[RMDB]
RNA sequence: GGGAACGACUCGAGUAGAGUCGAAAACACUUUAUCCGAGGCUAGUAUCAAGCCGGUAGAAAGGCCGCGCCUCGUAGAAUACGCUGUAGUCAUGGGAGAUGGUGAUAGGAUUGGUAGCGGUUAUUGGCAUAUCGGGUGAGUUCGCUCACCCGAUAUGAAAAGAAACAACAACAACAAC
Reactivity to DMS in 0.01 (KOAc 150mM, MgCl2 10mM, bicine 150mM(pH8.5), 24C), signal-to-noise 3, nucleotides 027 to 126: c130a100c110u000u010u000a100u000c070c000g030a060g010g000c010u000a090g020u000a090u000c160a110a100g020c070c010g010g010u000a060g010a080a120a160g020g000c000c010g030c110g010c010c020u000c040g030u010a040g020a110a080u000a040c130g000c100u010g010u000a050g010u010c040a060u000g000g010g010a070g010a070u000g000g010u010g000a090u000a060g010g010a090u000u000g010g010u010a070g030c080g010g000u000u000a080u000u010g000g010
Reactivity to 2A3 in 0.01 (KOAc 150mM, MgCl2 10mM, bicine 150mM(pH8.5), 24C), signal-to-noise 2, nucleotides 027 to 126: c070a020c050u110u120u080a090u060c050c020g020a040g000g000c010u060a030g050u070a300u300c060a070a020g060c030c030g010g030u070a060g220a110a130a010g090g000c010c010g050c040g000c010c020u000c010g010u040a030g040a040a050u130a070c030g030c090u070g030u080a010g040u040c020a070u070g040g000g030a110g010a020u080g000g030u040g000a070u060a090g080g000a090u040u060g060g000u030a030g060c030g020g020u000u070a080u060u080g070g000

An RNA of 177 nucleotides, treated with DMS and 2A3 and read out base by base. For 2A3, 2,062 sequencing reads were counted. Reactivities are given for positions 27 through 126. 2A3 adducts were read by reverse transcription with SuperScript II with manganese. Conditions: 150 mM KOAc, 10 mM MgCl2 and 150 mM bicine (pH 8.5), 24 C.